This 177-nucleotide RNA was probed chemically with 2A3 and DMS. The data come from the RNA Mapping Database (RMDB), library OK2TST. For DMS the reverse transcriptase was MarathonRT. The DMS profile rests on 1,850 reads.
RNA sequence: GGGAACGACUCGAGUAGAGUCGAAAAUAUAAACAUGACAGUGAUUUGCAUUUCAGACCAGCCCAAAGACUACUUUGCGGUAUGACUCUGUGUACCUGCAAGUCAAAUCCAGGAUUCACAGUUUUGGUGACUAGUGAAUCUUCGGAUUCACUAGUCAAAAAGAAACAACAACAACAAC
Reactivity to 2A3 in 0.01 (KOAc 150mM, MgCl2 10mM, bicine 150mM(pH8.5), 24C), signal-to-noise 2, nucleotides 027 to 126: u180a000u040a020a090a000c050a060u180g120a050c080a040g080u000g050a010u030u000u040g000c000a020u060u000u230c010a010g000a000c000c010a000g050c000c000c000a010a040a010g000a070c070u190a160c010u300u030u030g000c090g050g000u080a300u160g010a020c010u000c020u000g050u020g050u050a040c020c040u030g000c030a020a050g010u020c000a000a010a070u010c030c020a000g070g020a040u130u070c050a050c020a120g060u000u010u060u060g060g030
Reactivity to DMS in 0.01 (KOAc 150mM, MgCl2 10mM, bicine 150mM(pH8.5), 24C), signal-to-noise 3, nucleotides 027 to 126: u010a050u010a100a080a150c110a120u000g020a070c100a150g010u000g010a050u010u000u000g020c030a070u020u000u000c000a030g020a020c130c020a040g000c000c010c000a010a010a000g010a280c290u010a070c030u000u000u000g020c210g030g010u000a030u020g000a090c180u010c020u010g010u010g010u020a080c220c150u000g000c030a000a020g010u000c040a060a040a090u000c040c040a060g000g010a050u000u010c120a030c120a060g010u000u000u000u000g000g020